[RMDB]
Chemical mapping of a 207-nucleotide RNA with DMS and 2A3. Reactivities are given for positions 27 through 156. 2A3 adducts were read by reverse transcription with SuperScript II with manganese. The RNA was probed in 150 mM KOAc, 10 mM MgCl2 and 150 mM bicine (pH 8.5) at 24 C.

RNA sequence: GGGAACGACUCGAGUAGAGUCGAAAAGAUAUGGACGUCCUCCUUUCGCUUGGAUUUAUGGUGAACCUACUUUCGGAAACGAAAGUAGUCCCACCAUUGUCAGCGAUUCGGGACGUCCUAAGUCAAACCCACAAGACAACUUCGGUUGUCUUGUGGGCGGAUCAAAUACGUUCGCGUAUUUGAUCCGAAAAGAAACAACAACAACAAC
Reactivity to DMS in 0.01 (KOAc 150mM, MgCl2 10mM, bicine 150mM(pH8.5), 24C), signal-to-noise 1, nucleotides 027 to 156: g000a090u000a300u020g020g000a010c010g000u000c020c010u010c030c000u000u000u000c000g020c000u020u000g040g000a060u000u000u000a020u000g030g000u000g000a010a000c060c010u020a000c000u000u000u000c000g050g000a220a130a290c010g020a030a040a020g040u000a000g000u000c020c020c010a000c000c000a050u010u000g000u000c020a050g000c000g000a060u000u000c050g020g000g010a020c000g030u000c010c000u030a000a060g000u000c040a120a110a150c000c010c000a020c010a050a020g000a040c010a000a000c000u020u020c300g070g010u000u000g020u000c000u000u000g020u000g020g020g000
Reactivity to 2A3 in 0.01 (KOAc 150mM, MgCl2 10mM, bicine 150mM(pH8.5), 24C), signal-to-noise 5, nucleotides 027 to 156: g030a020u090a020u120g000g000a000c000g010u000c000c020u150c040c050u030u040u010c010g020c040u120u210g210g020a150u300u300u100a000u080g010g000u010g030a050a050c000c010u000a010c000u000u000u010c000g030g050a140a080a080c010g000a000a020a000g010u010a000g000u020c020c000c000a000c000c000a000u000u010g020u000c000a000g000c000g010a010u020u030c040g000g000g010a000c000g000u010c000c000u000a050a000g020u000c020a030a030a070c010c000c000a000c000a000a000g000a000c000a000a000c020u060u260c300g120g000u010u000g000u010c000u000u000g000u000g000g000g000